[RMDB]
RNA sequence: GGGAACGACUCGAGUAGAGUCGAAAAAUAUCAUACCGGAGGAAUGUAGGGAUGAUUAUGAGAGUGACGGGGAAAUACCACGUCACCGAGGCCUUGGCUGGGUAUCAGAUCCUGAAAGCCCCAGGCCCUUUAAGUACGGGUUCGCCCGUACUUAAAGAAAAGAAACAACAACAACAAC
Reactivity to DMS in 0.01 (KOAc 150mM, MgCl2 10mM, bicine 150mM(pH8.5), 24C), signal-to-noise 4, nucleotides 027 to 126: a090u000a060u000c030a050u000a070c040c020g020g040a110g020g010a110a090u010g020u010a150g010g000g010a000u000g000a050u010u010a090u010g010a120g010a130g030u010g000a020c010g010g010g020g000a150a110a110u020a150c000c000a040c010g000u000c000a010c000c060g010a100g010g010c010c010u000u010g030g010c050u000g000g000g000u000a150u010c080a090g000a130u000c050c020u010g010a050a050a170g010c060c000c030c090a040g010g010c050c020
Reactivity to 2A3 in 0.01 (KOAc 150mM, MgCl2 10mM, bicine 150mM(pH8.5), 24C), signal-to-noise 2, nucleotides 027 to 126: a010u030a010u040c020a010u020a130c000c020g070g120a070g050g130a190a120u240g020u170a100g000g010g010a000u010g020a030u050u160a070u110g190a060g010a030g050u020g000a000c020g000g000g020g030a120a140a040u180a120c000c000a070c020g000u000c000a000c000c020g010a040g030g000c010c020u070u060g030g030c090u040g030g010g000u050a040u090c040a030g060a220u120c000c020u050g070a180a070a020g030c000c000c000c040a000g000g010c000c010

This 177-nucleotide RNA was probed chemically with DMS and 2A3.
The DMS profile rests on 3,143 reads.
The data come from the RNA Mapping Database (RMDB), library OK2TRN.
For DMS the reverse transcriptase was MarathonRT.
Conditions: 150 mM KOAc, 10 mM MgCl2 and 150 mM bicine (pH 8.5), 24 C.